Structure probing data (2A3 and DMS) for a 177-nucleotide construct. For DMS the reverse transcriptase was MarathonRT. For DMS, 1,547 sequencing reads were counted. For 2A3 the reverse transcriptase was SuperScript II with manganese. Reactivities are given for positions 27 through 126. The reactions ran in a buffer of 150 mM KOAc, 10 mM MgCl2 and 150 mM bicine (pH 8.5), at 24 C.
RNA sequence: GGGAACGACUCGAGUAGAGUCGAAAAUGUGUUUGAAUGUGUUUAUGUAAGAGGAGCCGUACCUGUUGGUAUGUCUCAUUAUAAUGACACUACCUUCUUAAAUGGACAAAUUGCGUCUAGCAAUAAUCCCAUUACCUAUGUUCGCAUAGGUAAUGGGAAAAGAAACAACAACAACAAC
Reactivity to 2A3 in 0.01 (KOAc 150mM, MgCl2 10mM, bicine 150mM(pH8.5), 24C), signal-to-noise 5, nucleotides 027 to 126: u080g070u020g040u030u100u160g110a090a050u150g060u000g020u000u070u160a120u080g010u010a030a030g090a070g250g040a000g020c010c000g020u010a000c030c020u160g240u280u300g090g000u000a000u000g010u000c000u010c000a010u030u020a020u000a050a100u070g000a000c000a000c010u040a070c030c000u040u070c020u030u200a170a180a100u150g050g010a020c060a070a160a110u020u040g000c010g050u080c150u140a040g000c020a010a060u070a040a040u010
Reactivity to DMS in 0.01 (KOAc 150mM, MgCl2 10mM, bicine 150mM(pH8.5), 24C), signal-to-noise 2, nucleotides 027 to 126: u000g000u000g040u010u010u010g000a130a090u020g020u020g010u000u010u010a050u040g000u010a020a040g000a160g030g000a030g010c000c020g010u000a000c010c000u000g030u020u010g000g040u000a010u000g000u010c000u000c010a050u000u010a020u000a080a120u020g000a020c010a050c020u000a140c070c020u000u010c040u000u000a060a080a060u010g000g000a100c120a050a060a050u000u000g010c050g010u000c230u040a090g010c000a050a010u000a090a170u000